[RMDB]
RNA sequence: GGGAACGACUCGAGUAGAGUCGAAAAGAUAUGGAAACCUAUGGCUUCAACAGCAUUGGGAUAGGUAGGCUCGGAAACGAGCCUACCUAUCCCAAUGACAUGAAGUCAUACAUGGUUUCCUAAGUCACUAGAUUAUAUUCUUCGGAAUAUAAUCUAGAAAAGAAACAACAACAACAAC
Reactivity to DMS in 0.01 (KOAc 150mM, MgCl2 10mM, bicine 150mM(pH8.5), 24C), signal-to-noise 1, nucleotides 027 to 126: g020a060u000a300u000g000g000a000a020a020c000c000u000a030u010g000g000c010u000u010c010a010a110c300a220g000c010a000u010u000g000g010g030a030u000a010g040g000u000a050g030g000c050u020c010g010g000a070a070a220c020g040a030g060c000c020u010a010c000c000u000a010u000c030c000c000a000a000u010g000a060c080a130u010g010a000a000g010u000c010a000u000a020c300a080u000g020g010u000u000u000c000c000u010a020a090g000u010c050a200